[RMDB]
This 177-nucleotide RNA was probed chemically with 2A3 and DMS.
RNA sequence: GGGAACGACUCGAGUAGAGUCGAAAAACUGUGACGAACUCAAUGUGCGAUGGCCCGUUCACGCUCAAUCUCCCGCAGACGCUCUCGAUCAUUGAGCGCCAGUCGUCGUCCGAGCCGACCACGCCGGGUGGCGCUAUGAGUUCGCUCAUAGCGCCACAAAAGAAACAACAACAACAAC
Reactivity to 2A3 in 0.01 (KOAc 150mM, MgCl2 10mM, bicine 150mM(pH8.5), 24C), signal-to-noise 1, nucleotides 027 to 126: a000c030u090g040u080g070a050c010g010a110a100c010u020c040a030a180u160g040u090g040c020g060a060u060g080g000c000c020c080g020u060u090c040a030c070g040c010u000c020a040a060u030c020u030c100c030c000g000c050a060g030a140c030g020c040u000c000u010c030g160a160u130c040a060u020u080g010a000g010c000g000c000c020a010g030u000c010g030u010c000g000u000c040c030g010a000g020c000c020g020a070c020c000a060c010g040c030c030g090g000
Reactivity to DMS in 0.01 (KOAc 150mM, MgCl2 10mM, bicine 150mM(pH8.5), 24C), signal-to-noise 2, nucleotides 027 to 126: a110c070u020g000u000g010a090c040g000a080a070c030u010c060a080a090u000g020u000g010c040g020a070u010g010g010c010c060c060g000u000u010c090a100c050g000c040u000c050a060a070u000c110u010c010c020c020g020c140a080g010a070c090g000c020u000c030u010c070g010a100u000c140a060u000u000g000a000g020c060g010c050c070a060g010u000c050g020u010c020g010u000c040c050g000a140g020c030c000g000a100c020c070a080c090g040c110c060g020g000